[RMDB]
RNA sequence: GGGAACGACUCGAGUAGAGUCGAAAAGAGAGGGUGACCACCGGCGCGCGUCACUGAUAUAUCCACCGGGGGGUAAGGGGAGAAAAGGAUACAGCGCGACGAAGUUAGCACGCUGCCCCGUAAGGCUUGAAGAGUGUAGUGUUCGCACUACACUCAAACAUUUCUCUAUCUUCGGAUAGAGAAAUGUAAAAGAAACAACAACAACAAC
Reactivity to DMS in 0.01 (KOAc 150mM, MgCl2 10mM, bicine 150mM(pH8.5), 24C), signal-to-noise 2, nucleotides 027 to 156: g000a110g000a080g010g010g020u010g010a060c030c020a090c030c010g030g030c030g000c030g050c140g030u000c050a160c010u010g010a160u000a080u010a130u000c010c030a060c030c020g000g020g020g040g030g020u000a070a080g010g010g010g000a100g000a080a070a080a110g000g000a130u010a060c030a060g010c020g010c030g000a120c070g010a050a110g040u000u000a160g010c050a050c020g000c000u000g010c020c030c010c040g010u000a060a110g020g010c020u000u000g010a170a160g000a040g000u000g070u000a000g040u000g020u000u020c300g040c000a030c010u010a010c000a000c000u000c000a010a050
Reactivity to 2A3 in 0.01 (KOAc 150mM, MgCl2 10mM, bicine 150mM(pH8.5), 24C), signal-to-noise 2, nucleotides 027 to 156: g070a000g010a030g010g050g010u040g010a070c030c020a040c050c050g050g000c010g010c010g000c000g070u070c030a030c090u030g030a010u030a020u010a020u170c020c000a040c060c040g030g000g000g000g000g000u050a060a040g020g000g030g000a030g040a020a060a020a030g010g010a020u050a100c060a020g000c030g000c010g010a010c010g000a080a010g050u120u060a020g020c020a010c070g040c020u040g020c010c000c000c020g000u030a050a020g040g040c040u090u100g110a150a100g000a050g010u020g000u000a000g000u010g060u050u050c160g030c070a010c000u010a000c000a000c000u000c010a000a000